[RMDB]
RNA sequence: GGGAACGACUCGAGUAGAGUCGAAAAAAAGCAUCCGGAUCAACUAAACCACGUUGUAAAUGUUCUAGUAAACGAUAACGACGCAUCCAUGAGCGUGUUGCUUUCAUUACUAAUAAACGAUAAGUUGCAAUUCUUCUCCAUUCGUGGAGAAGAAUUGAAAAGAAACAACAACAACAAC
Reactivity to DMS in 0.01 (KOAc 150mM, MgCl2 10mM, bicine 150mM(pH8.5), 24C), signal-to-noise 4, nucleotides 027 to 126: a020a020a060g000c020a030u000c020c030g010g000a110u000c030a040a080c090u000a080a070a100c090c080a170c080g020u010u000g010u000a050a070a090u010g010u000u000c080u010a070g000u010a020a030a070c100g010a050u010a040a040c040g010a050c030g010c020a100u010c070c140a070u020g000a060g000c060g000u010g000u000u010g010c040u000u000u000c050a060u000u000a080c080u000a060a130u000a050a040a040c050g010a110u010a050a080g010u010u010g010
Reactivity to 2A3 in 0.01 (KOAc 150mM, MgCl2 10mM, bicine 150mM(pH8.5), 24C), signal-to-noise 1, nucleotides 027 to 126: a000a000a000g000c000a000u000c020c010g060g000a120u050c030a040a060c010u140a170a010a110c060c010a010c010g000u010u010g060u070a020a110a070u080g000u070u040c050u050a100g000u160a100a020a080c080g040a070u050a110a000c020g040a030c010g040c030a030u000c060c010a060u140g040a000g010c030g020u040g030u020u020g000c000u000u100u000c040a070u050u070a090c020u040a020a120u170a160a090a000c020g080a090u060a300a020g050u000u020g090